Source: RMDB library OK1LIB, as collected in RNAgym.
The record gives the reactivity of an RNA of 177 nucleotides to 2A3.
Reactivities are given for positions 27 through 126.
2A3 adducts were read by reverse transcription with SuperScript II with manganese.
The reactions ran in a buffer of 150 mM KOAc, 10 mM MgCl2 and 150 mM bicine (pH 8.5), at 24 C.
RNA sequence: GGGAACGACUCGAGUAGAGUCGAAAACAUCAACACCUUAUGGGACGUGAUCGGAAAACUCAUCGACCUGUUUCCGCCCGAGGAAUGCGCCAAUUUCUUCGCCCACGACGGAUAUGGACGCUCGAUGGUGCAGCUUAAGCUUCGGCUUAAGCUGCACAAAAGAAACAACAACAACAAC
Reactivity to 2A3 in 0.01 (KOAc 150mM, MgCl2 10mM, bicine 150mM(pH8.5), 24C), signal-to-noise 1, nucleotides 027 to 126: c040a020u060c000a000a070c000a060c100c000u100u190a210u300g000g050g030a030c030g050u020g030a020u050c040g000g070a000a000a040a060c040u010c000a010u010c040g060a130c000c000u000g000u000u000u000c000c030g060c130c000c000g070a040g020g020a010a110u040g010c000g090c000c090a000a110u000u000u080c040u000u010c000g000c000c000c000a060c010g020a000c020g020g000a000u070a060u160g000g110a040c000g020c030u080c090g110a110u110g040